[RMDB]
RNA sequence: GGGAACGACUCGAGUAGAGUCGAAAAGCUCGGCCUUUCGAGGCCGAGCAGACGCCGUUUGCCUAGGCUAUAGCCUAAAUUAAAACACAAGCUGAAACACAACUGCUGAACAUUUCGAUGUUCAGAAACUUAUAGUUAAUUUCGAUUAACUAUAAGUAAAAGAAACAACAACAACAAC
Reactivity to 2A3 in 0.01 (KOAc 150mM, MgCl2 10mM, bicine 150mM(pH8.5), 24C), signal-to-noise 4, nucleotides 027 to 126: g000c010u000c000g010g040c020c010u090u090u130c230g080a010g000g000c000c050g000a000g010c000a000g010a000c040g050c010c030g000u010u060u060g050c010c020u020a010g000g000c010u090a130u110a260g010c000c000u030a120a120a090u170u150a070a050a060a010c090a010c040a090a010g000c030u070g070a030a140a010c040a000c000a100a120c070u150g010c010u000g020a000a000c000a000u040u090u140c190g080a010u010g000u000u020c000a000g000a060a030
Reactivity to DMS in 0.01 (KOAc 150mM, MgCl2 10mM, bicine 150mM(pH8.5), 24C), signal-to-noise 4, nucleotides 027 to 126: g010c010u000c020g010g010c000c000u000u010u020c140g010a010g030g020c010c010g020a010g020c000a010g000a130c160g020c030c050g000u010u000u000g010c080c050u000a030g010g000c010u000a170u000a120g020c010c010u000a030a060a090u000u010a040a070a090a080c100a050c110a120a080g010c040u000g000a100a070a050c080a080c130a050a060c120u020g000c000u000g000a030a020c000a000u000u000u010c160g000a040u000g010u000u000c000a010g010a070a090